[RMDB]
RNA sequence: GGGAACGACUCGAGUAGAGUCGAAAAUGAAACUAAUCAAGAAACUCCACUUCUGCUUCUCAGGAAGUCAAAUUACUCCAUGUCUCAGCCAUAUCCAUCCAUUUACAGAUUCUCAUGAUUAGGUUCAGCUGCAACUCACGUAAGUCCAGGAAAAAGACUAAUCGAGUCCAUUCGUGGACUCGAUUAGAAAAGAAACAACAACAACAAC
Reactivity to DMS in 0.01 (KOAc 150mM, MgCl2 10mM, bicine 150mM(pH8.5), 24C), signal-to-noise 1, nucleotides 027 to 156: u010g000a100a040a120c070u000a050a060u010c010a140a130g000a190a070a080c050u010c030c010a070c030u020u000c030u000g000c030u000u000c070u000c040a210g000g050a090a090g030u000c050a050a000a070u000u000a050c020u000c000c080a060u000g000u010c040u000c050a080g020c060c030a150u000a080u000c050c050a100u000c040c030a070u000u000u000a140c070a030g020a110u000u000c030u000c050a090u000g010a110u000u000a040g030g000u000u000c030a080g050c070u010g000c040a060a090c080u000c020a020c050g010u010a070a030g010u000c020c030a120g030g020a020a030a040a050a110g010a190
Reactivity to 2A3 in 0.01 (KOAc 150mM, MgCl2 10mM, bicine 150mM(pH8.5), 24C), signal-to-noise 3, nucleotides 027 to 156: u070g000a000a010a010c050u090a050a060u080c040a040a030g050a130a080a030c060u050c020c020a030c000u050u020c020u040g060c010u090u060c040u020c050a030g060g050a040a010g030u080c060a000a140a080u070u070a030c020u010c030c000a080u120g020u020c030u010c070a030g020c030c010a060u060a030u100c000c010a020u040c030c010a030u060u080u110a090c060a010g090a070u080u030c010u000c040a070u090g010a100u040u110a000g010g000u040u050c020a030g000c000u030g010c030a030a050c030u000c040a070c020g040u080a070a010g050u020c040c040a030g060g020a030a040a070a040a070g050a040

This 207-nucleotide RNA was probed chemically with DMS and 2A3. Source: RMDB library OK3TST, as collected in RNAgym. Values cover nucleotides 27 to 156. 2A3 adducts were read by reverse transcription with SuperScript II with manganese.